[RMDB]
Notes: An RNA of 177 nucleotides, treated with DMS and 2A3 and read out base by base. The data come from the RNA Mapping Database (RMDB), library M2PK50. The reactions ran in a buffer of 150 mM KOAc, 10 mM MgCl2 and 150 mM bicine (pH 8.5), at 24 C. The 2A3 profile rests on 1,755 reads. 2A3 adducts were read by reverse transcription with SuperScript II with manganese. For DMS, 1,094 sequencing reads were counted.
RNA sequence: GGGAACGACUCGAGUAGAGUCGAAAAGAUUGCGGCUUCGGCCGCAAUCAAAGGACUACCCGUCAGGGUUAAGGCCAUACGGACAGCCCGGUCCACUGCCGAAAAUCUCCAACUUCGGUUGGAGAAACGUGAUAUCAUUCUUCGGAAUGAUAUCACGAAAAGAAACAACAACAACAAC
Reactivity to DMS in 0.01 (KOAc 150mM, MgCl2 10mM, bicine 150mM(pH8.5), 24C), signal-to-noise 2, nucleotides 027 to 126: g000a000u000u000g020c000g010g020c020u000u020c300g040g060c000c000g040c000a000a000u010c000a070a110a190g010g030a020c010u010a040c020c000c000g020u050c300a070g000g000g010u000u000a060a070g000g000c030c020a060u010a050c100g010g000a040c020a060g030c020c000c050g010g000u000c000c010a110c120u000g000c020c000g000a170a060a080a110u010c000u000c010c000a000a010c020u000u010c300g000g020u000u000g020g000a000g000a000a030a060
Reactivity to 2A3 in 0.01 (KOAc 150mM, MgCl2 10mM, bicine 150mM(pH8.5), 24C), signal-to-noise 2, nucleotides 027 to 126: g000a010u010u010g000c000g000g000c030u070u120c270g170g000c000c010g000c000a010a000u000c000a010a010a000g010g000a000c020u030a040c030c010c000g070u130c130a110g020g000g010u070u160a150a260g030g040c020c020a060u080a130c070g010g010a020c000a020g070c000c010c000g010g010u020c000c020a020c010u070g020c010c020g080a000a020a020a110u000c000u000c010c000a000a020c000u020u100c230g140g000u010u000g060g000a010g000a010a020a020